The record gives the reactivity of an RNA of 177 nucleotides to DMS and 2A3. It was measured as part of the RMDB libraries RFM100 and RFMREP. For DMS the reverse transcriptase was MarathonRT. The reactions ran in a buffer of 150 mM KOAc, 10 mM MgCl2 and 150 mM bicine (pH 8.5), at 24 C.
[RMDB]
RNA sequence: GGGAACGACUCGAGUAGAGUCGAAAAUCCCUGCUCAUGUAUCCGCAGACAUCGAGCCUGUCGGCACACGGCAGGCUCCCCGAAACGAAUCGGGACCGGACAAAGGCGUCCUUGCACUCACGGUGCACAAACUAAAUCUAUUCGUAGAUUUAGUUUGAAAAGAAACAACAACAACAAC
Reactivity to DMS in 0.01 (KOAc 150mM, MgCl2 10mM, bicine 150mM(pH8.5), 24C), signal-to-noise 9, nucleotides 027 to 126: u000c010c000c000u010g010c040u010c060a120u010g010u010a080u010c020c020g010c080a100g010a100c140a070u010c150g000a020g010c000c000u010g020u000c000g010g000c270a110c210a150c020g010g000c010a000g000g000c000u000c000c000c000c010g000a030a110a140c210g010a100a080u000c010g000g000g010a170c120c020g000g010a060c080a070a110a130g010g010c040g000u010c030c030u010u000g010c010a030c010u000c140a110c170g010g010u000g000c030a130
Reactivity to 2A3 in 0.01 (KOAc 150mM, MgCl2 10mM, bicine 150mM(pH8.5), 24C), signal-to-noise 9, nucleotides 027 to 126: u010c000c000c010u010g010c030u030c020a060u080g030u090a080u030c010c020g030c050a040g040a110c020a100u110c120g000a000g000c000c000u010g000u010c000g030g030c120a100c070a050c230g000g000c000a000g000g010c000u000c000c000c000c000g060a090a100a070c130g040a070a100u040c000g000g010g020a020c010c030g020g010a030c040a020a100a020g050g010c020g010u060c010c010u030u050g010c010a020c010u090c020a080c140g080g000u020g000c010a000